[RMDB]
RNA sequence: GGGAACGACUCGAGUAGAGUCGAAAAUGAGUCCGUUGUCUGGCGCGAUCCGUGACAUCAUGCGGGCAUACGACAUUGGUGUGGAGUCUGUUGACUGUACCAUGUCUCCAACUUCGGGAACACUCCUAGCGAUCCUAAUCACUCAGAGCAACAUGGAUAUGGACGUAUUAUUCGUAAUACGUCCAUAAAAAGAAACAACAACAACAAC
Reactivity to DMS in 0.01 (KOAc 150mM, MgCl2 10mM, bicine 150mM(pH8.5), 24C), signal-to-noise 3, nucleotides 027 to 156: u000g000a090g000u000c040c020g040u000u010g010u000c060u000g020g020c050g020c060g000a070u000c080c030g030u020g010a100c090a080u000c060a090u010g020c000g000g000g030c060a100u000a090c060g010a070c030a060u010u010g030g020u000g010u020g010g000a110g010u000c020u020g010u000u010g010a100c040u000g010u010a100c020c020a040u000g010u000c010u010c030c020a080a100c070u000u000c060g000g010g000a090a110c070a080c050u000c040c050u010a070g010c040g010a060u000c020c040u010a080a110u000c040a060c070u000c060a070g000a090g000c040a070a050c050a060u000g000g010a300
Reactivity to 2A3 in 0.01 (KOAc 150mM, MgCl2 10mM, bicine 150mM(pH8.5), 24C), signal-to-noise 7, nucleotides 027 to 156: u160g010a020g040u010c020c020g010u030u050g030u030c100u030g020g000c040g000c070g130a090u040c030c020g070u050g050a060c020a150u140c050a070u260g010c000g020g000g020c050a070u080a100c090g020a020c020a060u080u200g000g020u040g040u060g100g130a030g030u000c050u080g180u200u300g060a040c010u020g020u030a020c010c000a010u020g010u000c020u000c020c020a050a050c030u070u070c040g020g000g020a090a030c050a020c070u000c000c020u030a040g020c010g060a050u020c010c020u080a080a070u090c030a030c080u070c070a040g040a010g080c020a010a080c020a110u120g070g020a020
An RNA of 207 nucleotides, treated with DMS and 2A3 and read out base by base. Values cover nucleotides 27 to 156. DMS adducts were read by reverse transcription with MarathonRT. The DMS profile rests on 9,678 reads. Conditions: 150 mM KOAc, 10 mM MgCl2 and 150 mM bicine (pH 8.5), 24 C.